[RMDB]
RNA sequence: GGGAACGACUCGAGUAGAGUCGAAAAGAUAUGGAUUAGCAUCGAUCUCCACAGUCGAAGAACUCGGAAACGAGGGAGACUGGUGGAGGGAGCUAAUCCUAAGUCAAAAGUAUCGUUCGCGAUACAAGGAUACAAAAUCGUUCGCGAUUUUGUAUCCAAAAGAAACAACAACAACAAC
Reactivity to DMS in 0.01 (KOAc 150mM, MgCl2 10mM, bicine 150mM(pH8.5), 24C), signal-to-noise 2, nucleotides 027 to 126: g000a040u000a300u010g000g000a000u000u000a010g000c000a300u010c110g000a140u000c000u010c000c000a010c000a000g020u000c000g000a100a140g030a160a230c000u000c000g000g000a180a030a200c000g000a010g000g010g000a050g020a020c000u010g020g010u000g020g000a040g000g020g000a000g000c000u000a030a000u000c000c000u000a000a090g000u000c010a090a090a240a090g010u000a000u010c000g010u000u020c240g010c020g010a000u000a000c010a120a120
Reactivity to 2A3 in 0.01 (KOAc 150mM, MgCl2 10mM, bicine 150mM(pH8.5), 24C), signal-to-noise 1, nucleotides 027 to 126: g040a010u110a010u200g000g020a000u010u010a000g030c050a190u300c020g130a150u000c010u000c000c000a000c020a020g000u010c000g150a300a020g000a070a020c000u000c010g040g000a090a050a050c010g030a000g000g020g010a010g000a010c010u070g300g060u030g000g000a020g000g000g010a040g020c020u010a000a010u000c000c000u000a090a020g050u050c000a000a060a000a100g010u020a000u010c020g040u080u100c250g010c010g070a000u020a000c000a000a120
Structure probing data (DMS and 2A3) for a 177-nucleotide construct. For DMS, 993 sequencing reads were counted. The 2A3 profile rests on 1,960 reads. The RNA was probed in 150 mM KOAc, 10 mM MgCl2 and 150 mM bicine (pH 8.5) at 24 C.